This 207-nucleotide RNA was probed chemically with 2A3 and DMS. The reactions ran in a buffer of 150 mM KOAc, 10 mM MgCl2 and 150 mM bicine (pH 8.5), at 24 C. DMS adducts were read by reverse transcription with MarathonRT. For 2A3 the reverse transcriptase was SuperScript II with manganese.

[RMDB]
RNA sequence: GGGAACGACUCGAGUAGAGUCGAAAACGGCAAAAAAGCAAACUUGACCACCAAGGAUAAAAGCGAUCUUAUCCAAGGAUGCAAAAGAUAAUCUCACUUUUGACACCCACUGAUCUCGAACUUAAAGAAAACCGAGACUACUUCGGUAGUCUCGGAAUCUCACAGUAAAGUUCGCUUUACUGUGAGAAAAAGAAACAACAACAACAAC
Reactivity to 2A3 in 0.01 (KOAc 150mM, MgCl2 10mM, bicine 150mM(pH8.5), 24C), signal-to-noise 3, nucleotides 027 to 156: c010g040g000c030a000a000a080a030a080a020g090c050a150a090a050c040u040u030g040a080c010c020a000c030c020a070a050g050g000a010u050a090a080a040a020g090c050g050a070u020c000u010u040a000u050c030c020a020a050g020g000a030u070g000c000a000a010a040a010g010a050u110a150a100u110c040u040c070a040c000u020u040u030u050g050a030c020a060c000c020c030a030c080u100g070a090u050c060u020c050g070a110a070c050u090u120a180a070a030g100a000a120a050a030c000c000g000a000g010a010c000u000a000c000u010u070c080g020g000u000a000g000u000c000u000c000g000g000a000a010
Reactivity to DMS in 0.01 (KOAc 150mM, MgCl2 10mM, bicine 150mM(pH8.5), 24C), signal-to-noise 1, nucleotides 027 to 156: c090g010g000c040a000a050a010a180a010a040g000c080a070a080a110c050u000u010g000a210c170c010a070c010c000a110a300g040g000a040u000a040a000a070a090g010c140g000a160u000c030u000u000a020u000c000c000a070a260g030g010a120u000g010c000a040a080a040a010g000a050u010a040a080u000c090u000c090a090c050u000u000u000u010g040a180c070a050c020c000c000a170c030u010g000a020u000c060u000c020g000a040a060c040u000u000a050a000a050g000a110a050a080a160c000c000g000a000g000a030c000u000a010c000u000u020c300g030g010u010a000g000u010c000u000c000g000g030a020a010
Values are in units of 0.01, from 0 to 300, in steps of 10.